[RMDB]
RNA sequence: GGGAACGACUCGAGUAGAGUCGAAAAGUAAGAUGAUUCGUCAUCUUACGAACCCGAUGAAGCGGCACAUACCGAGCAUCAUACAUCUAAGAGUGCAAAUAAUGGCGCGUGGUUUCGACCACGCGAAGGCAUGCAAUGUGUUCGCACAUUGCAUGCCAAAAGAAACAACAACAACAAC
Reactivity to DMS in 0.01 (KOAc 150mM, MgCl2 10mM, bicine 150mM(pH8.5), 24C), signal-to-noise 1, nucleotides 027 to 126: g000u000a010a000g000a030u000g010a010u000u020c220g050u000c000a000u000c000u000u000a000c000g000a130a140c030c090c000g000a100u010g010a160a130g020c010g030g000c010a030c030a050u010a100c060c030g000a110g010c000a010u000c030a130u000a080c160a050u000c100u030a060a040g030a180g020u000g030c040a100a000a050u010a030a070u010g000g000c000g010c000g000u000g010g000u000u000u000c300g000a010c000c000a020c000g000c010g040a020a030
Reactivity to 2A3 in 0.01 (KOAc 150mM, MgCl2 10mM, bicine 150mM(pH8.5), 24C), signal-to-noise 2, nucleotides 027 to 126: g000u010a000a000g010a000u010g000a020u020u060c070g080u000c100a010u000c000u000u000a000c010g000a010a020c000c040c010g000a060u090g040a110a070g070c020g000g030c030a030c010a160u080a080c020c010g000a020g050c000a040u050c000a000u090a090c030a040u050c040u110a070a050g100a030g060u040g040c020a000a080a110u230a100a110u190g130g010c020g000c000g000u000g000g020u000u030u200c280g050a000c010c000a000c010g000c020g010a000a000